[RMDB]
RNA sequence: GGGAACGACUCGAGUAGAGUCGAAAAUUAGGGGUGUGGGUCUUCCAUUGGGGCAUGAUGGACCUGUCUACAGGUGAUCUCUGUUGCCUUUGGGUCAGCACAUUUGUUAGUCUCCUGGGGGUGAAAAAUCCAAUACUGACUUCGGUCAGUAUUGGAUAAAAGAAACAACAACAACAAC
Reactivity to DMS in 0.01 (KOAc 150mM, MgCl2 10mM, bicine 150mM(pH8.5), 24C), signal-to-noise 3, nucleotides 027 to 126: u060u040a070g010g010g030g020u020g030u020g000g000g000u010c040u010u020c030c030a050u010u020g000g020g010g000c050a040u020g020a050u000g000g000a100c140c000u000g000u000c080u000a040c020a020g000g020u010g000a060u040c060u040c100u010g000u030u010g000c000c020u010u000u040g010g000g020u020c080a040g020c080a130c100a100u030u010u010g000u010u030a100g010u010c020u010c020c020u000g010g010g000g000g010u020g000a000a030a110a060
Reactivity to 2A3 in 0.01 (KOAc 150mM, MgCl2 10mM, bicine 150mM(pH8.5), 24C), signal-to-noise 4, nucleotides 027 to 126: u180u110a060g000g030g000g010u120g010u130g060g020g000u000c020u130u040c040c010a060u050u110g030g000g000g040c030a030u090g070a050u050g060g080a030c010c000u050g110u190c040u090a100c010a010g040g040u060g080a150u000c040u000c050u140g090u100u060g070c000c000u020u020u010g010g000g000u080c010a030g060c050a020c000a050u030u030u030g020u040u040a060g030u010c010u040c070c040u030g040g010g000g000g010u040g060a060a040a000a000
This 177-nucleotide RNA was probed chemically with DMS and 2A3. Values cover nucleotides 27 to 126. The RNA was probed in 150 mM KOAc, 10 mM MgCl2 and 150 mM bicine (pH 8.5) at 24 C. The data come from the RNA Mapping Database (RMDB), library OK1LIB.